This 177-nucleotide RNA was probed chemically with DMS and 2A3.
DMS adducts were read by reverse transcription with MarathonRT.
Conditions: 150 mM KOAc, 10 mM MgCl2 and 150 mM bicine (pH 8.5), 24 C.
Source: RMDB library OK2TRN, as collected in RNAgym.
For 2A3, 2,541 sequencing reads were counted.
RNA sequence: GGGAACGACUCGAGUAGAGUCGAAAAGGUUCGCUGUCCACCUCGACGUGCCAGGGGAACGCGAGGCCCUGGGCGAUACCGGAGAGGUCGGCGUCGUUGAACGAGUCGUCGGUGUAGACCUCGGUGAUGAGUAAUCCUCAUUCGUGAGGAUUACUCAAAAAGAAACAACAACAACAAC
Reactivity to DMS in 0.01 (KOAc 150mM, MgCl2 10mM, bicine 150mM(pH8.5), 24C), signal-to-noise 4, nucleotides 027 to 126: g010g000u010u000c030g000c020u000g010u010c060c040a300c010c010u010c020g020a180c020g000u010g010c010c040a100g000g000g010g020a070a040c040g010c060g010a050g010g020c060c020c030u000g010g000g010c030g010a080u010a100c120c030g020g000a210g020a020g000g010u000c070g020g020c030g000u000c050g000u010u010g000a100a150c080g000a050g010u000c020g020u000c030g000g010u000g020u000a150g000a060c000c000u000c010g000g000u010g020a150
Reactivity to 2A3 in 0.01 (KOAc 150mM, MgCl2 10mM, bicine 150mM(pH8.5), 24C), signal-to-noise 2, nucleotides 027 to 126: g030g000u050u050c000g010c040u080g010u070c030c000a030c000c010u020c010g190a230c010g040u050g080c070c090a100g010g030g000g040a090a040c010g030c050g200a040g000g030c030c000c060u060g020g010g000c060g030a070u120a150c050c020g000g000a010g020a000g010g010u030c040g000g000c010g020u030c010g050u060u210g080a110a060c030g000a070g080u020c020g000u020c010g050g030u120g040u070a060g050a060c000c010u000c050g070g070u110g000a100